[RMDB]
An RNA of 177 nucleotides, treated with DMS and 2A3 and read out base by base. Values are in units of 0.01, from 0 to 300, in steps of 10. For DMS, 14,672 sequencing reads were counted. 2A3 adducts were read by reverse transcription with SuperScript II with manganese.
RNA sequence: GGGAACGACUCGAGUAGAGUCGAAAACGGUACCCGCUACUCCCCCGCCGCCGGGGAGAUCGUGUGGCCCGACGGCGGGAUCAGCCUGCCCGCUCUGAUGAGGCGCACGGUCGGCGAGGCGCGGGAACUAUACGUAAUCCUUCGGGAUUACGUAUAGAAAAGAAACAACAACAACAAC
Reactivity to DMS in 0.01 (KOAc 150mM, MgCl2 10mM, bicine 150mM(pH8.5), 24C), signal-to-noise 7, nucleotides 027 to 126: c070g010g010u010a130c010c000c010g010c030u000a190c070u000c020c090c000c000c020g020c070c080g020c090c030g010g000g010g000a100g010a010u000c060g020u000g010u010g020g010c010c000c010g010a110c120g000g010c000g020g000g000a020u010c070a110g000c060c060u000g010c010c000c010g000c010u010c060u000g000a210u010g010a150g010g010c040g000c040a030c060g010g010u000c090g010g020c070g010a080g010g010c200g010c050g000g000g000a060a140
Reactivity to 2A3 in 0.01 (KOAc 150mM, MgCl2 10mM, bicine 150mM(pH8.5), 24C), signal-to-noise 7, nucleotides 027 to 126: c020g050g050u110a060c000c000c010g020c010u070a060c030u050c030c020c010c000c010g060c060c020g040c030c010g010g000g060g010a050g000a020u060c030g010u020g030u050g230g100c020c010c020g020a020c010g010g010c000g000g020g000a020u080c020a020g110c010c020u080g020c020c000c000g030c010u100c050u130g210a220u140g030a070g060g010c010g000c010a010c020g000g020u030c020g040g030c050g020a030g020g010c020g000c010g000g000g010a000a000